Chemical mapping of a 170-nucleotide RNA with 2A3 and DMS. Source: RMDB library 15KLIB, as collected in RNAgym. The DMS profile rests on 19,075 reads. 2A3 adducts were read by reverse transcription with SuperScript II with manganese.
[RMDB]
RNA sequence: GGGAACGACUCGAGUAGAGUCGAAAAAAAUCACCUCCAGAGGACCCCUUCAGCGAACAGAGGCGCUCGCACGGGAUAGGAGUAAGACCAUAGCGAUAGGGAGAGAUGCUAGGAGUUAGAGGAGACCGUACACACGUGUUCGCACGUGUGAAAAGAAACAACAACAACAAC
Reactivity to 2A3 in 0.01 (KOAc 150mM, MgCl2 10mM, bicine 150mM(pH8.5), 24C), signal-to-noise 6, nucleotides 027 to 129: a000a000a030u080c030a040c010c010u020c020c000a040g010a030g110g020a070c010c010c000c000u100u100c060a050g010c010g050a030a020c010a070g020a040g050g010c040g040c030u030c020g060c010a050c040g000g000g020a040u140a090g020g020a020g040u100a060a020g030a040c010c000a040u090a050g050c030g070a040u080a070g020g000g000a010g010a010g000a010u060g040c030u050a020g010g010a050g050u100u080a020g000a010g010g030a010g000a000c000c000g050u140a020
Reactivity to DMS in 0.01 (KOAc 150mM, MgCl2 10mM, bicine 150mM(pH8.5), 24C), signal-to-noise 7, nucleotides 027 to 129: a000a000a000u060c080a110c000c020u020c090c070a140g020a100g040g020a100c060c010c010c010u060u050c110a140g010c050g040a020a050c030a060g010a090g020g010c070g050c070u000c020g010c150a120c140g000g000g000a000u040a060g040g000a020g010u000a040a050g020a070c040c050a070u030a020g030c040g050a070u030a070g030g060g010a050g030a030g000a080u040g020c090u050a090g020g030a090g010u030u030a050g020a080g030g010a060g020a070c060c040g010u060a110